[RMDB]
RNA sequence: GGGAACGACUCGAGUAGAGUCGAAAAGGCUGUUGCCGGAGCCGAUACCGGAAUACGAGACCUUAUGUGCGGUCGAAUGCACUGAAGUACGAAAGUACGAAGAGGUCAUACCGAGGACCGAGACUCGAUAUGCUCGAUAGAUGGAGCUUUACAUCAACAUAAUUAUACUGUUCGCAGUAUAAUUAUGAAAAGAAACAACAACAACAAC
Reactivity to DMS in 0.01 (KOAc 150mM, MgCl2 10mM, bicine 150mM(pH8.5), 24C), signal-to-noise 3, nucleotides 027 to 156: g040g000c010u010g040u000u010g000c000c060g020g000a110g000c030c040g010a100u000a100c020c020g000g000a130a150u010a140c060g010a140g010a050c030c010u000u000a090u010g010u000g030c000g000g020u000c150g010a120a120u000g010c000a060c030u000g010a110a270g010u020a020c030g000a110a130a230g000u000a020c020g000a070a120g010a120g010g010u000c000a100u000a080c030c030g020a090g010g000a200c080c040g010a160g010a110c010u000c000g010a100u000a040u000g020c030u010c000g010a120u010a090g020a140u000g000g010a070g010c020u000u010u000a090c100a090u010c020a080a200
Reactivity to 2A3 in 0.01 (KOAc 150mM, MgCl2 10mM, bicine 150mM(pH8.5), 24C), signal-to-noise 4, nucleotides 027 to 156: g010g010c040u050g060u160u090g040c000c000g000g020a010g040c070c140g040a030u070a110c010c000g000g020a070a040u130a090c090g020a020g040a150c020c000u080u070a060u130g030u020g010c030g020g000u060c070g040a050a040u130g000c000a000c000u070g070a080a020g000u000a000c000g030a110a050a030g010u010a000c000g020a060a020g050a010g020g010u020c020a010u070a050c020c020g020a010g020g040a020c030c080g030a040g040a080c010u010c020g020a050u040a040u180g010c000u000c020g060a080u090a080g060a030u060g060g000a040g010c000u040u060u050a040c030a040u060c030a020a040

Structure probing data (DMS and 2A3) for a 207-nucleotide construct. Source: RMDB library OK3TST, as collected in RNAgym. Reactivities are given for positions 27 through 156. Values are in units of 0.01, from 0 to 300, in steps of 10.